[RMDB]
The data come from the RNA Mapping Database (RMDB), library M2RFPK. Chemical mapping of a 207-nucleotide RNA with DMS and 2A3.
RNA sequence: GGGAACGACUCGAGUAGAGUCGAAAAGCUUCCGUCGAACGCGAAAGUCGGACGGCGGCCAUGAGUCGCAACGCAAAGCCGCGGCAAGUGCAGUUAGCGAGAAGAGACUAGGCUUUGGUUUCUUCAAAUUAGUGAGUGUGGUUCGCCACACUCACAACAUAAAAAAUGACUUCGGUCAUUUUUUAUGAAAAGAAACAACAACAACAAC
Reactivity to DMS in 0.01 (KOAc 150mM, MgCl2 10mM, bicine 150mM(pH8.5), 24C), signal-to-noise 2, nucleotides 027 to 156: g000c000u000u000c010c000g040u000c020g010a070a090c090g000c020g020a120a110a190g020u000c020g000g030a230c000g020g050c030g030g000c020c040a080u030g000a130g050u000c010g030c010a060a140c050g000c030a050a170a270g020c010c020g020c000g020g020c050a090a160g000u010g030c010a120g010u000u010a200g020c030g010a190g000a060a030g010a050g010a040c000u000a070g010g000c070u000u010u000g030g010u000u000u010c010u000u000c010a050a070a160u000u000a110g000u000g000a020g020u000g010u010g030g000u010u010c270g000c010c000a010c000a010c010u020c000a020c000a000a160
Reactivity to 2A3 in 0.01 (KOAc 150mM, MgCl2 10mM, bicine 150mM(pH8.5), 24C), signal-to-noise 4, nucleotides 027 to 156: g010c020u110u050c030c000g000u000c000g020a060a040c020g010c020g140a270a090a070g140u300c010g010g020a030c020g000g000c000g020g000c020c040a130u190g030a030g040u040c010g000c030a030a060c040g000c080a070a060a030g010c060c020g020c050g040g000c040a100a070g060u050g060c070a060g040u110u080a070g050c040g020a040g010a100a020g050a010g010a000c020u030a040g030g020c020u020u030u020g010g000u000u000u020c000u020u020c030a060a090a200u120u110a050g000u000g000a000g000u010g000u010g010g030u020u060c170g020c030c010a000c000a000c000u000c000a010c000a000a000
Record summary:
For DMS, 4,766 sequencing reads were counted. The RNA was probed in 150 mM KOAc, 10 mM MgCl2 and 150 mM bicine (pH 8.5) at 24 C. For DMS the reverse transcriptase was MarathonRT.